[RMDB]
Structure probing data (2A3 and DMS) for a 207-nucleotide construct. The data come from the RNA Mapping Database (RMDB), library OK3TST. The RNA was probed in 150 mM KOAc, 10 mM MgCl2 and 150 mM bicine (pH 8.5) at 24 C. For 2A3, 5,271 sequencing reads were counted.

RNA sequence: GGGAACGACUCGAGUAGAGUCGAAAAGGAGGAAGGAUGUCGAAACCGAGAGGUCCUGAGGAAUCGCUUUUUAGAGUGUGACUAACAGAUUGUGUUAGUGUGUACAGCCACCGUAUACCACUCUUCAGAAACCUCAGGCGACAGUGACGGUGGCAAACGUUGAUCUCUAAUUCGUUAGAGAUCAACGAAAAGAAACAACAACAACAAC
Reactivity to 2A3 in 0.01 (KOAc 150mM, MgCl2 10mM, bicine 150mM(pH8.5), 24C), signal-to-noise 6, nucleotides 027 to 156: g060g010a020g010g020a050a000g030g020a030u050g030u060c040g060a110a040a030c040c030g030a020g010a000g070g020u050c000c000u000g000a000g010g010a010a020u030c010g060c100u150u080u010u060u080a000g010a000g000u020g040u110g100a020c000u000a000a000c010a160g210a300u230u180g140u020g000u100u000a000g000u000g000u000g000u030a010c010a020g000c010c000a010c010c000g000u000a000u000a020c010c000a000c000u000c000u090u090c090a050g010a010a000a000c000c010u010c000a000g010g000c030g000a000c010a020g040u050g090a050c030g000g010u000g000g000c000a020a010a000
Reactivity to DMS in 0.01 (KOAc 150mM, MgCl2 10mM, bicine 150mM(pH8.5), 24C), signal-to-noise 3, nucleotides 027 to 156: g020g010a070g020g020a090a060g010g010a060u000g020u000c020g010a080a070a100c020c000g010a130g000a140g010g010u000c010c010u000g030a040g020g000a030a300u000c030g010c160u010u000u030u000u000a050g020a040g020u010g000u000g020a120c000u010a000a010c010a070g020a250u010u010g030u010g010u000u000a010g040u020g020u000g030u000a030c050a100g010c000c020a010c000c000g000u000a060u000a190c030c000a010c010u000c010u020u010c100a140g010a030a020a300c020c010u000c010a050g020g020c040g010a050c060a060g010u000g010a030c050g010g010u000g010g030c000a020a010a080